[RMDB]
RNA sequence: GGGAACGACUCGAGUAGAGUCGAAAAGCGAAUUCGCGCGAAGCCGCCUGAUGCGCGUCGCCGCCCGGGGCGAUCACUCGCGCACGGCUCGGGCCUGCCGACAGAUCCUCGGCUCGUCGCUCGCGAAGGAGCAGUGAUUAUUCGUAAUCACUGCUCCAAAAGAAACAACAACAACAAC
Reactivity to DMS in 0.01 (KOAc 150mM, MgCl2 10mM, bicine 150mM(pH8.5), 24C), signal-to-noise 4, nucleotides 027 to 126: g010c050g030a090a220u000u010c070g000c020g020c050g010a110a090g000c040c070g000c210c070u000g000a110u010g010c030g020c080g020u000c030g000c060c100g030c100c030c030g000g000g010g020c020g010a060u010c150a140c180u000c050g010c030g000c040a090c050g000g000c040u000c070g000g000g020c020c050u000g020c050c010g000a060c120a070g010a100u000c090c170u000c030g010g000c030u000c080g000u000c030g010c070u000c010g020c040g020a120a110
Reactivity to 2A3 in 0.01 (KOAc 150mM, MgCl2 10mM, bicine 150mM(pH8.5), 24C), signal-to-noise 3, nucleotides 027 to 126: g010c020g030a080a110u160u090c060g010c000g010c020g060a070a020g010c030c020g070c020c070u140g040a150u080g050c030g000c030g010u000c000g010c020c010g050c000c040c020g020g020g010g010c040g000a060u130c060a050c110u110c040g020c020g020c030a020c010g000g000c030u050c040g040g020g040c020c040u050g040c020c010g030a040c030a040g110a070u040c010c010u020c020g000g000c010u020c020g060u020c010g020c010u020c010g000c010g010a050a110
An RNA of 177 nucleotides, treated with DMS and 2A3 and read out base by base.
2A3 adducts were read by reverse transcription with SuperScript II with manganese.
DMS adducts were read by reverse transcription with MarathonRT.
For DMS, 3,385 sequencing reads were counted.
Source: RMDB library OK2TRN, as collected in RNAgym.
Values cover nucleotides 27 to 126.